[RMDB]
Conditions: 150 mM KOAc, 10 mM MgCl2 and 150 mM bicine (pH 8.5), 24 C. Chemical mapping of a 177-nucleotide RNA with DMS and 2A3. For DMS, 1,851 sequencing reads were counted. It was measured as part of the RMDB library OK1LIB.
RNA sequence: GGGAACGACUCGAGUAGAGUCGAAAAGAAAGCGCGAGACCAAGAUGCUGAAAAAGAGCAUCGGUCGAGCCUAAACAGCGAAGAGGCCGGAAUUUGCUGGAGGCAGCGAAGCUGUCGAGCGCGAAAAGGGAUAUUCCUACUUCGGUAGGAAUAUCCCAAAAGAAACAACAACAACAAC
Reactivity to DMS in 0.01 (KOAc 150mM, MgCl2 10mM, bicine 150mM(pH8.5), 24C), signal-to-noise 1, nucleotides 027 to 126: g000a150a090a140g000c000g030c000g090a300g040a020c000c080a170a220g000a000u000g040c000u040g000a040a060a090a170a100g000a040g020c000a000u000c010g000g000u000c000g000a210g000c000c010u010a020a190a040c010a030g000c010g000a010a030g010a100g000g000c040c000g000g000a070a120u060u000u000g000c000u010g000g010a140g000g020c030a000g000c040g000a070a030g020c090u000g030u000c030g000a230g040c020g010c010g000a060a020a110a100
Reactivity to 2A3 in 0.01 (KOAc 150mM, MgCl2 10mM, bicine 150mM(pH8.5), 24C), signal-to-noise 2, nucleotides 027 to 126: g070a000a120a000g020c030g000c000g000a040g010a030c010c000a060a070g000a000u000g000c000u030g130a120a030a000a100a050g160a000g070c000a000u000c000g000g000u020c000g000a000g000c000c000u070a110a080a000c010a000g020c030g040a010a030g010a010g010g010c050c000g000g030a080a050u110u080u070g010c020u000g000g020a040g010g000c000a000g050c050g100a030a020g010c020u010g010u040c000g070a040g000c030g010c040g050a120a070a000a000